Source information:
This 177-nucleotide RNA was probed chemically with 2A3 and DMS. For DMS the reverse transcriptase was MarathonRT. For 2A3, 2,380 sequencing reads were counted. It was measured as part of the RMDB library OK1LIB. Reactivities are given for positions 27 through 126. The reactions ran in a buffer of 150 mM KOAc, 10 mM MgCl2 and 150 mM bicine (pH 8.5), at 24 C. High DMS reactivity at an A or C suggests that its Watson-Crick edge is free.
RNA sequence: GGGAACGACUCGAGUAGAGUCGAAAAAAGUCAAUUUGCAAACGGAGGGCAAAUAUGAUUUUUCGCUGGUGUUCCUUCUUGGCCUCUGUUUGUUUUUAUUUGCCAACUGCCGCUUAUUGACAUUAAAAGUUUUAGUAGGGUUCGCCCUACUAAAACUAAAAGAAACAACAACAACAAC
Reactivity to 2A3 in 0.01 (KOAc 150mM, MgCl2 10mM, bicine 150mM(pH8.5), 24C), signal-to-noise 4, nucleotides 027 to 126: a000a010g030u010c020a020a010u030u060u040g000c030a050a090a040c050g050g000a010g010g020g020c020a010a060a020u170a090u120g140a140u060u070u010u050u140c050g010c060u070g030g050u050g040u100u090c010c000u070u060c040u060u050g030g060c020c000u040c030u030g030u040u060u050g030u030u040u020u010u030a070u000u050u050g020c010c010a040a050c070u040g030c000c000g040c010u030u060a030u040u070g010a000c000a010u100u210a050a120a050
Reactivity to DMS in 0.01 (KOAc 150mM, MgCl2 10mM, bicine 150mM(pH8.5), 24C), signal-to-noise 2, nucleotides 027 to 126: a020a020g000u000c030a030a010u010u000u010g010c000a070a090a150c030g010g030a020g000g000g000c000a010a020a050u000a020u020g010a080u020u000u020u010u000c010g050c100u000g010g000u020g020u020u010c030c010u020u040c130u010u010g000g060c040c000u000c080u000g000u000u010u010g010u010u000u030u020u030a040u000u020u000g000c010c000a060a030c010u020g000c070c300g010c030u000u000a010u000u020g000a010c000a060u050u000a100a140a050